[RMDB]
RNA sequence: GGGAACGACUCGAGUAGAGUCGAAAACGGCGCGGACAAACGUCCAGAUGGUUGGCAUGUCUCUCCCUGGUUAGCGGUGACGGGUCUCGCCGAACGUAUCGCGGUGCAGAUGUGACUCAAGUGACACCGUUCACCAUACGUUCGCGUAUGGUGAACGAAAAGAAACAACAACAACAAC
Reactivity to 2A3 in 0.01 (KOAc 150mM, MgCl2 10mM, bicine 150mM(pH8.5), 24C), signal-to-noise 1, nucleotides 027 to 126: c040g000g040c020g040c080g040g000a000c020a050a300a040c060g030u030c010c030a020g040a070u100g000g090u100u040g000g000c060a060u040g020u000c010u020c020u000c020c030c000u020g130g000u030u140a030g040c000g000g120u060g010a010c130g070g000g000u020c010u000c000g000c000c070g040a050a030c020g030u070a030u130c070g010c000g030g010u030g000c000a030g030a140u070g030u100g100a060c030u010c100a070a090g060u020g050a030c010a040c030
Reactivity to DMS in 0.01 (KOAc 150mM, MgCl2 10mM, bicine 150mM(pH8.5), 24C), signal-to-noise 3, nucleotides 027 to 126: c080g010g030c050g050c120g010g020a040c070a050a120a120c090g000u010c030c010a130g010a060u010g020g030u000u000g040g010c050a090u000g010u000c040u000c080u000c040c010c020u010g000g010u010u010a130g000c070g030g000u000g010a040c110g000g010g000u000c030u000c040g010c020c070g010a040a070c100g030u000a050u000c110g010c040g000g010u010g020c130a070g000a110u000g020u010g020a090c030u000c050a100a150g010u000g010a130c050a060c050